Description:
An RNA of 177 nucleotides, treated with DMS and read out base by base.
[RMDB]
RNA sequence: GGGAACGACUCGAGUAGAGUCGAAAAAUUGAAUAAUGCACUAUUAAGCCGGCAACUUCGUAUUCAAAUGACCAUUGCUGUGUGUAGUUAGUGUGUUGUGUGCGGUGGGAAUGAUGACGAAGCCUGACUAUUUAGCGUCCUUCGGGACGCUAAAUAGAAAAGAAACAACAACAACAAC
Reactivity to DMS in 0.01 (KOAc 150mM, MgCl2 10mM, bicine 150mM(pH8.5), 24C), signal-to-noise 2, nucleotides 027 to 126: a080u020u010g020a210a100u000a010a010u000g010c020a010c020u000a020u020u010a090a300g000c020c030g000g010c030a010a030c080u000u010c030g030u000a070u020u020c300a060a140a090u000g020a130c080c080a130u000u010g000c000u000g000u000g040u000g000u000a060g000u010u000a000g020u010g040u010g020u000u000g020u000g050u000g000c060g000g000u000g000g000g000a080a080u000g020a050u020g010a060c080g050a060a040g000c020c010u010g020a050

For DMS the reverse transcriptase was MarathonRT.